[RMDB]
RNA sequence: GGGAACGACUCGAGUAGAGUCGAAAAUGGGAGGCUGAUACACAAAUUGGGCUGAAAUACUGCUCUACUUGUCACCAUGCCUCCCUAGAAUAAACUGCCUUUUGAUGACCGGGACGAAUUGAGUGAAUCCCAAACAUUAGUUCGCUAAUGUUUGGGAAAAAGAAACAACAACAACAAC
Reactivity to DMS in 0.01 (KOAc 150mM, MgCl2 10mM, bicine 150mM(pH8.5), 24C), signal-to-noise 4, nucleotides 027 to 126: u000g000g020g010a010g010g020c000u000g010a040u010a150c240a010c010a030a020a100u000u000g000g000g000c000u010g010a130a140a110u010a120c300u010g000c010u000c010u000a050c100u000u000g010u010c100a100c080c010a040u010g010c000c000u000c000c000c010u000a000g010a090a120u020a040a090a140c110u000g020c020c020u000u000u000u000g010a110u000g000a080c060c030g010g000g010a060c050g000a070a060u000u010g010a100g000u000g000a100a140
Reactivity to 2A3 in 0.01 (KOAc 150mM, MgCl2 10mM, bicine 150mM(pH8.5), 24C), signal-to-noise 1, nucleotides 027 to 126: u080g000g000g000a000g020g000c030u000g000a050u070a170c080a010c000a090a060a010u060u060g020g010g010c000u010g050a030a000a000u200a020c170u110g020c010u000c000u000a020c000u000u010g000u020c030a030c060c000a070u180g000c010c000u060c000c000c000u010a020g000a020a000u110a040a080a050c010u060g030c020c000u050u080u040u120g120a140u040g020a000c020c020g000g030g020a000c030g040a070a050u130u060g000a010g070u130g080a050a020